[RMDB]
RNA sequence: GGGAACGACUCGAGUAGAGUCGAAAACCUAAGUUCCUCUCUUGGAUGAGGAUGGAUAGGAUGGAACAAGCUAUAGAUGAAAUAGCAGAAAUUAUGAUAUACCAUGAUAACGGUAUGAUUGCUAACGGUGUGAGUCUAAUUUCGAUUAGACUCACACAAAAGAAACAACAACAACAAC
Reactivity to 2A3 in 0.01 (KOAc 150mM, MgCl2 10mM, bicine 150mM(pH8.5), 24C), signal-to-noise 5, nucleotides 027 to 126: c020c000u040a100a060g070u030u000c010c000u020c010u030c040u100u140g200g060a150u120g100a070g130g030a070u080g070g010a040u050a080g070g050a030u130g020g040a060a030c040a090a020g000c010u020a020u050a140g140a210u200g100a210a220a010u020a010g030c040a010g140a030a120a010u180u110a080u140g050a020u010a000u020a150c010c020a030u140g090a150u240a150a040c050g000g000u010a000u050g100a090u020u180g010c040u040a120a040c070g110
Reactivity to DMS in 0.01 (KOAc 150mM, MgCl2 10mM, bicine 150mM(pH8.5), 24C), signal-to-noise 5, nucleotides 027 to 126: c010c000u000a100a140g020u000u000c000c010u000c040u010c040u000u020g020g010a130u000g020a070g010g000a040u000g010g010a100u000a070g000g010a100u010g010g010a090a080c060a150a100g030c020u010a030u010a060g000a140u000g000a090a070a040u000a010g010c010a120g000a090a110a070u000u000a060u000g010a130u000a080u000a020c000c020a140u000g010a120u010a100a140c170g010g000u000a010u000g000a120u000u000g010c100u000a070a090c230g010

Conditions: 150 mM KOAc, 10 mM MgCl2 and 150 mM bicine (pH 8.5), 24 C. Structure probing data (2A3 and DMS) for a 177-nucleotide construct. In probing experiments dimethyl sulfate is read out at A N1 and C N3, which are open when not base-paired. The data come from the RNA Mapping Database (RMDB), library OK2TRN. Values cover nucleotides 27 to 126.